[RMDB]
RNA sequence: GGGAACGACUCGAGUAGAGUCGAAAACUAUGGUGAGGCCCUAUCUAGUAUAGCAAUCCACCAAGCAGGUGAAUUCACACAAUUCAGGUUCUCAUAGAAAAUGCGCCCUGACUUGACAGGUAUGGUCAAUAUACGGCGCUUUCGAGCGCCGUAUAUUAAAAGAAACAACAACAACAAC
Reactivity to 2A3 in 0.01 (KOAc 150mM, MgCl2 10mM, bicine 150mM(pH8.5), 24C), signal-to-noise 1, nucleotides 027 to 126: c020u050a110u130g050g000u090g040a070g010g000c000c000c060u080a080u030c000u060a000g080u090a050u000a120g000c060a050a050u080c030c000a000c000c000a100a000g000c020a050g300g060u080g000a050a000u020u080c080a020c010a000c000a040a010u000u000c000a000g120g000u190u130c030u000c000a060u110a010g260a030a220a070a000u070g010c000g030c050c000c000u000g000a000c000u000u020g040a000c000a000g070g000u080a000u030g020g000u000c000
Reactivity to DMS in 0.01 (KOAc 150mM, MgCl2 10mM, bicine 150mM(pH8.5), 24C), signal-to-noise 1, nucleotides 027 to 126: c060u000a070u100g000g010u060g000a120g000g070c300c070c010u000a010u000c000u000a030g000u030a070u000a090g000c130a070a200u010c040c000a030c000c010a020a090g120c200a180g090g010u000g000a000a000u000u010c030a140c070a280c090a040a010u000u000c000a010g150g000u010u000c100u000c070a070u110a300g000a040a030a000a110u000g010c080g000c300c000c000u000g080a000c170u000u000g000a140c090a020g100g000u000a030u000g000g040u030c060
Conditions: 150 mM KOAc, 10 mM MgCl2 and 150 mM bicine (pH 8.5), 24 C.
Chemical mapping of a 177-nucleotide RNA with 2A3 and DMS.
Reactivities are given for positions 27 through 126.
For DMS the reverse transcriptase was MarathonRT.
The DMS profile rests on 826 reads.
It was measured as part of the RMDB library OK1LIB.